[RMDB]
RNA sequence: GGGAACGACUCGAGUAGAGUCGAAAAACUCACCGCCCGUCACACCAUGGGAGUUGAUUUCACUCGAAGUGGAAAUACUAAAUGAGUUAUCCCCCACAGUGGAAUCAGCGACUGGGGUGAAGUCGUAAGCCUAUUGACUGUUCGCAGUCAAUAGGCUAAAAGAAACAACAACAACAAC
Reactivity to DMS in 0.01 (KOAc 150mM, MgCl2 10mM, bicine 150mM(pH8.5), 24C), signal-to-noise 1, nucleotides 027 to 126: a000c000u020c030a160c060c100g000c000c030c000g030u020c090a300c010a000c000c010a000u070g000g000g000a300g030u000u000g000a000u000u000u000c000a010c000u000c010g000a130a220g000u000g000g000a000a080a000u000a060c000u000a200a170a300u130g040a010g050u000u000a300u000c010c010c100c030c000a300c300a020g020u140g000g000a000a000u000c000a000g000c060g010a180c000u000g000g000g000g000u000g000a040a090g000u000c020g000u060a180
Reactivity to 2A3 in 0.01 (KOAc 150mM, MgCl2 10mM, bicine 150mM(pH8.5), 24C), signal-to-noise 1, nucleotides 027 to 126: a000c000u010c030a050c020c010g030c000c000c000g050u000c000a040c020a060c060c000a110u080g030g000g000a010g000u000u000g000a000u010u000u000c000a000c000u020c010g030a110a000g000u060g040g070a020a060a060u210a030c050u140a080a280a280u250g040a080g020u000u040a050u040c010c010c010c000c030a020c010a000g000u000g010g010a000a000u000c000a000g030c000g050a010c000u020g000g020g000g000u030g030a050a010g030u010c040g010u070a000